[RMDB]
RNA sequence: GGGAACGACUCGAGUAGAGUCGAAAAGAUAUGGAUGUUCGUAACAUGCGAAGAACUACCUUCGGAAACGAAGGUAGGGAGCAUGCUACGAGACAUCCUAAGUCAAAACGGUUGGUUCGCCAACCGACCUGAACACCCUCUUCGGAGGGUGUUCAGGAAAAGAAACAACAACAACAAC
Reactivity to DMS in 0.01 (KOAc 150mM, MgCl2 10mM, bicine 150mM(pH8.5), 24C), signal-to-noise 1, nucleotides 027 to 126: g040a040u000a300u010g010g000a020u000g030u020u000c020g020u000a000a000c010a020u000g050c000g050a180a150g040a170a140c000u000a000c000c000u000u000c010g000g010a110a090a290c010g010a100a050g000g000u010a010g000g000g000a120g010c010a010u000g010c010u020a000c030g020a060g020a020c000a030u000c000c000u000a020a040g000u010c040a140a070a170a260c060g000g020u000u000g010g030u030u020c230g000c020c000a050a020c000c000g000a000
Reactivity to 2A3 in 0.01 (KOAc 150mM, MgCl2 10mM, bicine 150mM(pH8.5), 24C), signal-to-noise 1, nucleotides 027 to 126: g000a070u110a040u190g010g000a000u000g030u040u010c010g010u000a000a000c030a010u030g110c010g300a300a030g000a090a090c020u010a000c000c030u010u020c020g000g000a040a070a070c000g000a000a020g020g000u010a000g030g000g000a000g000c010a000u000g000c000u010a000c010g040a030g020a010c000a020u070c000c010u010a130a010g050u040c130a110a080a050a010c020g030g000u010u000g020g060u070u130c300g130c120c000a000a000c010c000g010a040
Chemical mapping of a 177-nucleotide RNA with DMS and 2A3. DMS adducts were read by reverse transcription with MarathonRT. DMS (dimethyl sulfate) methylates the pairing face of unpaired adenines and cytosines. For 2A3, 2,210 sequencing reads were counted. It was measured as part of the RMDB library TTRDES. Conditions: 150 mM KOAc, 10 mM MgCl2 and 150 mM bicine (pH 8.5), 24 C.